[RMDB]
RNA sequence: GGGAACGACUCGAGUAGAGUCGAAAAGACCCAUCCUCAGUAUUAUGGUGUAUCUAAAUACGUUUAUGACGAUUCAACAGAUACCGUGUAUCGUAAUCUUGAAAAGCACCAGACAGGCGUUAUUUACACUAGAGUAUCUGGCGGAAAGUGGGAGAAAUCUAUAUGACCAGUUCGCUGGUCAUAUAGAAAAAGAAACAACAACAACAAC
Reactivity to 2A3 in 0.01 (KOAc 150mM, MgCl2 10mM, bicine 150mM(pH8.5), 24C), signal-to-noise 4, nucleotides 027 to 156: g100a010c000c000c000a030u130c020c010u010c010a010g030u030a050u080u060a030u070g000g000u010g020u020a050u010c060u080a060a090a090u120a050c040g000u010u100u120a160u160g050a030c030g010a050u040u060c050a070a030c030a180g050a060u070a090c060c100g040u070g020u110a010u050c010g000u020a070a110u020c050u060u060g050a040a060a000a030g050c040a040c070c020a050g030a090c060a020g030g070c010g010u030u010a020u010u040u020a020c020a000c010u030a000g000a000g070u000a010u110c020u010g020g010c060g030g020a110a070a090g030u090g040g040g000a080g060a030a070a030
Reactivity to DMS in 0.01 (KOAc 150mM, MgCl2 10mM, bicine 150mM(pH8.5), 24C), signal-to-noise 2, nucleotides 027 to 156: g000a140c010c010c000a090u000c020c010u010c040a060g010u000a050u000u000a090u000g030g050u000g010u000a060u000c050u000a090a050a110u000a080c030g000u000u000u000a080u010g020a080c030g020a210u000u000c020a060a060c070a110g010a050u000a020c020c120g010u000g040u010a020u000c020g000u000a060a080u010c080u000u020g000a070a050a070a290g030c020a060c030c040a080g010a060c090a100g020g030c040g000u010u000a050u000u000u000a030c040a020c010u000a040g000a090g030u000a020u010c000u000g000g040c060g000g000a040a020a090g010u000g020g000g000a180g000a070a080a100